[RMDB]
RNA sequence: GGGAACGACUCGAGUAGAGUCGAAAAUCCUGUACCUAUAGGUAGAGGCCAGGGCAGCUGCUCAGCACCCUAAGGUGCCCAGGACAGCUGCUCAGAGAAUCUGUAGCCCAAAAUGUCAACAGUGACCGUUUACGGCAUAGUUCGCUAUGCCGUAAACAAAAGAAACAACAACAACAAC
Reactivity to DMS in 0.01 (KOAc 150mM, MgCl2 10mM, bicine 150mM(pH8.5), 24C), signal-to-noise 2, nucleotides 027 to 126: u010c000c000u000g010u000a030c080c020u000a150u030a090g010g020u000a020g010a070g000g010c140c050a090g000g010g000c010a010g000c010u000g030c010u000c040a190g000c000a000c010c000c260u020a110a120g000g020u000g020c000c120c260a100g010g010a030c010a010g010c000u010g010c000u000c030a000g020a100g000a180a090u000c030u010g000u000a100g010c010c000c060a110a070a060a090u000g010u000c040a050a070c100a090g010u000g000a070c070c300
Reactivity to 2A3 in 0.01 (KOAc 150mM, MgCl2 10mM, bicine 150mM(pH8.5), 24C), signal-to-noise 2, nucleotides 027 to 126: u030c000c000u050g080u060a050c010c000u150a130u190a300g010g010u020a040g010a030g130g000c030c050a030g060g000g000c000a000g000c020u000g020c000u000c040a000g000c000a010c000c000c040u140a200a200g010g000u010g010c010c070c070a000g000g040a010c000a000g060c020u000g040c010u000c020a000g010a000g010a000a050u020c030u080g130u070a040g020c000c060c000a020a060a020a080u190g020u030c030a030a030c030a170g030u070g070a060c000c080
Chemical mapping of a 177-nucleotide RNA with DMS and 2A3. It was measured as part of the RMDB library OK2TRN. The RNA was probed in 150 mM KOAc, 10 mM MgCl2 and 150 mM bicine (pH 8.5) at 24 C. 2A3 adducts were read by reverse transcription with SuperScript II with manganese. The DMS profile rests on 1,495 reads.